An RNA of 177 nucleotides, treated with 2A3 and DMS and read out base by base. The RNA was probed in 150 mM KOAc, 10 mM MgCl2 and 150 mM bicine (pH 8.5) at 24 C. Values are in units of 0.01, from 0 to 300, in steps of 10.
[RMDB]
RNA sequence: GGGAACGACUCGAGUAGAGUCGAAAAUUUGGAUUAUUCAUUUAAAUGACUACAUUUAAAAUGAUUACAAGAAAGGUGUUCUAGCCAGAAACAUGACUUGAUUAGACAAGAUAAAAAUCUUGGCGAGCAACGCCAAUUGGUUCGCCAAUUGGCGUUGAAAAGAAACAACAACAACAAC
Reactivity to 2A3 in 0.01 (KOAc 150mM, MgCl2 10mM, bicine 150mM(pH8.5), 24C), signal-to-noise 2, nucleotides 027 to 126: u180u010u030g020g010a020u130u050a090u050u110c000a030u000u000u010a020a020a030u020g100a150c120u230a090c190a040u000u000u040a090a050a020a000u010g010a040u040u100a060c010a010a090g100a150a050a040g120g010u030g070u030u020c030u020a030g000c000c040a060g070a020a110a030c050a080u190g060a060c010u050u010g040a120u230u100a060g040a130c000a000a000g010a020u190a060a220a030a000a010u020c010u060u090g000g000c000g020a000g030
Reactivity to DMS in 0.01 (KOAc 150mM, MgCl2 10mM, bicine 150mM(pH8.5), 24C), signal-to-noise 2, nucleotides 027 to 126: u040u000u010g020g010a170u010u030a030u000u020c000a020u000u020u010a000a030a000u000g000a210c300u040a090c070a020u000u010u020a010a020a040a040u000g000a010u000u000a150c090a000a040g010a040a100a140g040g030u000g000u010u000c000u000a140g010c020c080a040g010a060a060a040c140a070u020g010a080c000u000u000g000a230u000u070a120g010a090c040a020a000g000a120u000a050a040a060a070a060u010c000u030u010g000g000c000g000a110g010